[RMDB]
RNA sequence: GGGAACGACUCGAGUAGAGUCGAAAAGAUAUGGAUCGGCGUGUACCUUCAACAGCUCGGAAACGAGACAUGAAGACACCCGAUCCUAAGUCAAAGGCGUGACUCAAGUUCGCUUGAGUCACGCCAACAAUCUCUAAGCCUUCGGGCUUAGAGAUUGAAAAGAAACAACAACAACAAC
Reactivity to DMS in 0.01 (KOAc 150mM, MgCl2 10mM, bicine 150mM(pH8.5), 24C), signal-to-noise 2, nucleotides 027 to 126: g030a050u000a300u010g000g010a000u000c000g010g010c220g000u000g020u000a110c260c000u000u000c000a060a090c280a130g000c000u000c020g000g000a130a070a160c020g000a010g000a050c050a170u000g000a010a000g000a020c000a000c010c000c000g000a000u000c000c010u000a000a110g000u020c020a070a150a150g000g000c000g030u010g000a010c000u000c000a020a010g030u000u020c200g000c020u000u020g010a040g010u000c000a000c010g010c020c000a000a050
Reactivity to 2A3 in 0.01 (KOAc 150mM, MgCl2 10mM, bicine 150mM(pH8.5), 24C), signal-to-noise 1, nucleotides 027 to 126: g020a010u040a010u160g000g000a000u020c010g000g030c230g080u000g020u130a290c010c030u000u010c020a100a080c040a220g080c030u010c010g050g000a060a110a030c020g010a010g070a020c030a040u150g000a010a000g090a050c000a010c000c000c020g000a000u020c000c000u000a010a030g020u000c000a040a030a140g020g000c020g020u020g010a000c020u000c000a010a050g030u080u120c300g070c170u000u010g020a020g000u010c050a000c010g010c000c000a000a000

This 177-nucleotide RNA was probed chemically with DMS and 2A3. In probing experiments dimethyl sulfate is read out at A N1 and C N3, which are open when not base-paired. For 2A3, 2,238 sequencing reads were counted. High 2A3 reactivity points to a flexible backbone, as in loops and unpaired stretches. DMS adducts were read by reverse transcription with MarathonRT. The reactions ran in a buffer of 150 mM KOAc, 10 mM MgCl2 and 150 mM bicine (pH 8.5), at 24 C.